[RMDB]
RNA sequence: GGGAACGACUCGAGUAGAGUCGAAAAGAUAUGGAUGAGGUAUACACUGAUGACCUCCCCACAUUAAGGAUACGUCGGAAACGACGUAUCCUUAAUGUGGGGAGCAAGGUGAUACUCAUCCUAAGUCCUCUACAUACCAGUUCGCUGGUAUGUAGAGAAAAGAAACAACAACAACAAC
Reactivity to DMS in 0.01 (KOAc 150mM, MgCl2 10mM, bicine 150mM(pH8.5), 24C), signal-to-noise 1, nucleotides 027 to 126: g000a140u010a300u010g010g010a040u010g000a050g020g000u010a020u000a170c010a010c000u000g010a130u030g000a080c300c010u010c000c010c000c000a000c000a000u000u000a020a000g000g040a030u000a000c000g050u030c010g000g010a080a080a270c020g010a010c000g010u000a000u000c000c000u000u010a020a000u000g010u000g000g000g000g030a000g010c010a020a040g040g030u000g000a090u000a020c000u000c000a000u000c000c000u000a030a120g010u010c050